Chemical mapping of a 177-nucleotide RNA with DMS and 2A3. 2A3 adducts were read by reverse transcription with SuperScript II with manganese. Source: RMDB library OK2TST, as collected in RNAgym. For DMS, 1,119 sequencing reads were counted. The RNA was probed in 150 mM KOAc, 10 mM MgCl2 and 150 mM bicine (pH 8.5) at 24 C.
RNA sequence: GGGAACGACUCGAGUAGAGUCGAAAAAGAAAAGGCUGUCUGAGUACACAGCAAGAGGUCAGCUACUCACAAGGCAAGAGAAGAGGGCUCAAAAUGAAACUUAUGUUGCUGGCACCUCGAUCUUGGAUCCCUGUUUACGAUUCGUCGUAAACAGGGAAAAAGAAACAACAACAACAAC
Reactivity to DMS in 0.01 (KOAc 150mM, MgCl2 10mM, bicine 150mM(pH8.5), 24C), signal-to-noise 2, nucleotides 027 to 126: a100g020a090a130a150a160g020g000c020u000g000u000c070u000g000a060g030u020a060c110a040c070a030g000c010a110a070g000a110g060g000u000c110a070g010c120u000a030c000u000c020a160c300a080a130g000g000c020a030a050g010a080g010a130a100g000a050g030g010g000c030u000c090a030a080a060a060u000g000a070a050a080c100u000u000a120u000g000u000u000g010c110u000g000g000c060a070c040c000u000c000g010a200u000c000u000u000g010g000a150
Reactivity to 2A3 in 0.01 (KOAc 150mM, MgCl2 10mM, bicine 150mM(pH8.5), 24C), signal-to-noise 2, nucleotides 027 to 126: a000g060a050a060a010a010g170g010c010u010g010u030c040u050g070a000g010u040a050c030a000c010a050g010c040a040a020g050a020g080g090u110c070a020g000c070u000a020c000u030c000a040c010a080a020g090g050c010a020a020g010a000g020a220a000g010a030g010g040g000c010u030c110a140a180a060a050u160g070a160a040a020c060u180u100a120u300g060u030u060g030c040u050g060g000c030a200c060c000u030c020g000a010u010c010u020u010g030g040a020